[RMDB]
RNA sequence: GGGAACGACUCGAGUAGAGUCGAAAAGGCCAUCGUUUUUGCCAGACCAUUUUCGAUGGCCAUAGGUCUGGCUUAUAGUUCAAUCGCCGAGAGGCGUACAGUUAGAGUAGCGAGCUCGAAGCACGCGACCGGUAAGAGCUCGCGAAGGUCGCGGAGAAAUAUUAUCCGUGUUCGCACGGAUAAUAUUAAAAGAAACAACAACAACAAC
Reactivity to DMS in 0.01 (KOAc 150mM, MgCl2 10mM, bicine 150mM(pH8.5), 24C), signal-to-noise 3, nucleotides 027 to 156: g010g000c010c010a030u010c020g010u030u000u000u020u000g010c000c020a150g000a030c020c020a150u000u000u000u010c050g000a040u000g020g010c000c010a030u000a030g040g010u000c020u000g000g000c010u000u010a070u000a100g020u010u000c070a080a150u000c020g050c000c010g010a280g000a300g040g020c000g020u010a030c080a120g010u000u000a130g040a140g010u000a200g000c040g000a030g010c010u000c030g000a120a230g010c070a070c030g030c020g010a020c030c010g000g010u000a080a250g000a060g000c010u000c010g050c000g010a040a050g000g010u000c020g030c020g000g000a190g010a140
Reactivity to 2A3 in 0.01 (KOAc 150mM, MgCl2 10mM, bicine 150mM(pH8.5), 24C), signal-to-noise 2, nucleotides 027 to 156: g010g000c000c000a020u040c090g060u020u010u100u230u130g010c000c010a010g000a030c020c010a090u090u020u090u150c030g020a030u010g000g030c000c000a020u070a020g000g030u020c000u000g020g000c030u000u070a030u010a010g030u000u110c060a040a070u030c070g000c000c000g060a040g000a030g050g000c010g000u020a020c010a010g060u110u130a040g000a010g120u030a010g000c010g000a000g000c000u000c020g040a180a050g070c060a030c100g050c080g070a070c050c030g020g000u020a050a000g000a000g020c020u040c030g000c010g000a000a000g010g000u060c020g000c060g060g030a050g050a040
This 207-nucleotide RNA was probed chemically with DMS and 2A3. Source: RMDB library OK3TST, as collected in RNAgym.